[RMDB]
RNA sequence: GGGAACGACUCGAGUAGAGUCGAAAAUCCAGUAGUAGGCGACCACGAUGUUGCCCCUUCCCCCUUUCAGGGAGAGGGAGCCGGCGGUGCUUCCCUUGUUCGUUCGUUCGGUUGAAAGGGCCUGGAAUCAGAGCAAAAAGUUCGCUUUUUGCUCUGAAAAAGAAACAACAACAACAAC
Reactivity to DMS in 0.01 (KOAc 150mM, MgCl2 10mM, bicine 150mM(pH8.5), 24C), signal-to-noise 2, nucleotides 027 to 126: u010c020c010a080g010u000a110g020u000a110g030g020c010g000a020c050c050a120c190g010a110u010g000u010u010g020c000c000c060c070u000u000c030c020c000c020c010u000u000u000c060a050g020g010g010a080g000a020g000g000g000a050g030c010c040g030g040c140g000g010u000g040c010u010u000c000c000c010u000u000g030u010u000c030g020u000u010c130g010u010u000c070g000g000u000u000g000a020a030a040g000g010g020c220c020u000g020g000a100a250
Source information
An RNA of 177 nucleotides, treated with DMS and read out base by base. For DMS, 1,797 sequencing reads were counted. Values are in units of 0.01, from 0 to 300, in steps of 10.